[RMDB]
Source: RMDB library OK3TST, as collected in RNAgym. Chemical mapping of a 207-nucleotide RNA with 2A3. Conditions: 150 mM KOAc, 10 mM MgCl2 and 150 mM bicine (pH 8.5), 24 C. For 2A3, 665 sequencing reads were counted.

RNA sequence: GGGAACGACUCGAGUAGAGUCGAAAACGCAUGCGAGAGCAUGCGGCUAAGCUUCGGCUUAGUAAGAGAAACUUAGGAUUUUAGGCUCCCCGGCGUGUCUCGAACCAUGCCGGGCCAAACCCAUAGGGCUGGCGGUCCCUGUGCGGUCAGAAUUCAAAAUACUGAUCAGCUUCGGCUGAUCAGUAUUAAAAGAAACAACAACAACAAC
Reactivity to 2A3 in 0.01 (KOAc 150mM, MgCl2 10mM, bicine 150mM(pH8.5), 24C), signal-to-noise 1, nucleotides 027 to 156: c000g000c030a000u000g010c010g000a050g000a000g120c010a000u000g000c000g000g010c000u000a000a000g000c000u020u100c250g180g000c000u000u010a010g000u030a120a000g010a020g000a050a070a000c050u090u090a080g050g020a100u090u120u010u070a070g000g030c060u110c020c010c000c000g000g000c000g050u010g020u000c070u030c300g110a020a030c010c000a000u000g010c000c010g020g000g000c000c000a000a010a000c010c000c000a000u000a000g040g010g030c010u040g010g090c060g010g020u090c000c000c000u000g010u000g010c110g000g030u010c010a020g130a120a120u030u040c070a020a000